Chemical mapping of a 170-nucleotide RNA with DMS and 2A3. DMS adducts were read by reverse transcription with MarathonRT. Conditions: 150 mM KOAc, 10 mM MgCl2 and 150 mM bicine (pH 8.5), 24 C. 2A3 adducts were read by reverse transcription with SuperScript II with manganese. Source: RMDB library 15KLIB, as collected in RNAgym.
[RMDB]
RNA sequence: GGGAACGACUCGAGUAGAGUCGAAAAGAGUUGGGGGAGACCGAAGCGAGGAGGAAAGCAAAGAAAGCAACGGGGCUAGCCGUCAGGUGUUCCUCCCCCCGAGAGGGGAAGAGUGAGGCUUAUCCCGGAACGGCGAUCUUCGGAUCGCCGAAAAGAAACAACAACAACAAC
Reactivity to DMS in 0.01 (KOAc 150mM, MgCl2 10mM, bicine 150mM(pH8.5), 24C), signal-to-noise 4, nucleotides 027 to 129: g030a110g000u010u020g050g020g110g000g000a080g000a120c050c030g060a230a080g020c020g010a070g080g060a000g000g040a030a120a070g080c220a110a060a110g050a010a020a010g030c060a010a040c130g000g000g020g000c020u050a070g000c020c000g030u020c080a030g070g000u040g000u030u030c030c020u000c000c020c000c020c000c090g000a120g010a190g000g000g040g000a000a060g050a040g020u010g040a160g030g000c160u030u000a080u070c090c020c040g050g000a060a080
Reactivity to 2A3 in 0.01 (KOAc 150mM, MgCl2 10mM, bicine 150mM(pH8.5), 24C), signal-to-noise 2, nucleotides 027 to 129: g100a010g050u150u150g000g000g000g000g000a040g060a010c000c000g020a030a010g010c060g000a000g010g020a000g030g030a050a100a000g010c010a000a070a100g080a010a020a010g050c010a020a020c020g010g020g020g030c050u080a000g000c000c000g050u060c020a060g110g050u110g070u060u050c010c010u030c000c000c020c030c030c040g070a050g020a130g050g030g000g010a000a050g030a020g020u120g060a000g000g000c080u030u060a050u040c040c000c000g000g030a040a040